[RMDB]
RNA sequence: GGGAACGACUCGAGUAGAGUCGAAAAUAAGCCAAAGGGAUGUCCCGACCGGAGGCCGACAAUCCAGGGAACCGGAUGUCUUCACGUUGUUGCAGUACCAGAUGGCAUCUUAAAUCCGAUCUGCAAAAAAAGUCUUACACCUUCGGGUGUAAGACAAGAAUAAUAAAAUGUUCGCAUUUUAUUAUUCAAAAGAAACAACAACAACAAC
Reactivity to DMS in 0.01 (KOAc 150mM, MgCl2 10mM, bicine 150mM(pH8.5), 24C), signal-to-noise 2, nucleotides 027 to 156: u010a060a080g020c000c020a040a210a270g000g000g030a080u000g000u010c040c000c020g010a120c030c030g020g030a300g060g010c010c010g020a130c120a020a100u000c030c030a090g000g010g030a060a120c070c010g050g030a050u000g040u000c060u050u020c050a210c120g000u020u000g020u000u020g000c020a060g020u000a130c090c010a090g010a080u000g010g000c070a070u000c050u020u000a050a090a100u010c040c060g010a060u000c010u010g000c020a010a000a090a070a040a060a170g010u010c000u000u000a000c000a010c010c000u010u000c300g050g000g050u010g010u010a010a010g000a010c020a000a020
Reactivity to 2A3 in 0.01 (KOAc 150mM, MgCl2 10mM, bicine 150mM(pH8.5), 24C), signal-to-noise 2, nucleotides 027 to 156: u120a020a020g010c000c000a000a010a000g020g010g010a020u050g040u040c030c010c010g010a000c000c000g000g020a010g010g000c010c000g020a020c070a140a090u100c130c110a050g030g020g010a030a050c030c040g020g000a020u020g020u010c000u030u030c060a070c080g090u110u100g090u100u030g030c020a010g020u060a080c050c030a050g000a020u010g010g020c010a030u020c030u060u130a110a170a090u090c040c030g030a060u050c020u020g000c000a020a010a000a000a040a040a050g000u000c000u000u000a000c000a000c010c010u060u110c230g100g020g000u000g000u000a000a010g000a000c000a010a000